[RMDB]
RNA sequence: GGGAACGACUCGAGUAGAGUCGAAAAAUGGCAUUACAUGAUACAGAAAUUGUACGUACAAUGGCAACAGGUAUCGCUGGUUUAUCAGUAGCAGCUGACUCAUUAUCUGCAAUUAAAUAUGCACAAGUGACUGAAUCCAUUUCGAUGGAUUCAGUCAAAAAGAAACAACAACAACAAC
Reactivity to 2A3 in 0.01 (KOAc 150mM, MgCl2 10mM, bicine 150mM(pH8.5), 24C), signal-to-noise 3, nucleotides 027 to 126: a000u040g030g030c000a000u000u120a020c000a050u160g010a110u040a060c060a040g110a040a190a020u070u070g000u030a040c100g060u060a020c060a100a030u040g070g000c030a040a050c000a120g160g030u120a100u070c050g010c020u030g020g020u100u160u060a160u120c020a000g020u060a020g010c030a000g000c000u040g050a020c000u010c000a030u040u150a060u090c020u040g000c000a000a040u000u090a120a130a070u200a050u140g070c060a040c030a270a000g090
Reactivity to DMS in 0.01 (KOAc 150mM, MgCl2 10mM, bicine 150mM(pH8.5), 24C), signal-to-noise 3, nucleotides 027 to 126: a130u050g000g040c080a030u000u010a060c040a020u010g000a140u050a000c040a070g000a060a130a040u020u000g000u000a030c210g010u050a080c070a020a090u000g040g000c080a040a050c150a080g000g040u030a060u010c050g010c020u000g020g000u040u050u000a090u030c030a010g000u010a080g000c040a060g030c030u000g000a060c100u020c040a130u000u010a050u030c070u010g000c030a060a070u020u030a030a030a130u040a070u000g040c010a070c210a050a020g030